The record gives the reactivity of an RNA of 207 nucleotides to 2A3. For 2A3, 620 sequencing reads were counted. Reactivities are given for positions 27 through 156.
RNA sequence: GGGAACGACUCGAGUAGAGUCGAAAAUUUAACAGAUAUAUUCUGGCUGAGAUGGUCAAGGGGGAGUGUUAAUACAUGGGAAGCAAUUGCAGAUAAGAUGUGUUACGACCGUAGUACGAUAUAUCGUAAACGUGCAAGGAUAUUGGAAAUCUUUGCAUGGAUGACACUGAUUCGUCAGUGUCAUCCAAAAAGAAACAACAACAACAAC
Reactivity to 2A3 in 0.01 (KOAc 150mM, MgCl2 10mM, bicine 150mM(pH8.5), 24C), signal-to-noise 1, nucleotides 027 to 156: u100u160u110a030a030c020a020g020a030u020a020u020a040u250u130c020u070g040g000c010u130g040a070g020a120u100g010g000u070c110a060a080g030g000g000g010g000a100g000u040g000u020u070a020a050u040a050c120a070u030g090g010g000a030a000g000c020a000a050u080u020g010c040a000g010a070u110a090a080g030a020u090g010u020g020u020u000a020c100g000a000c010c010g020u080a010g100u010a090c000g000a020u100a050u060a010u150c000g070u040a030a030a000c050g000u000g000c010a010a010g000g010a000u010a030u080u210g120g010a070a210a000u000c020u020u000u000g000c000a000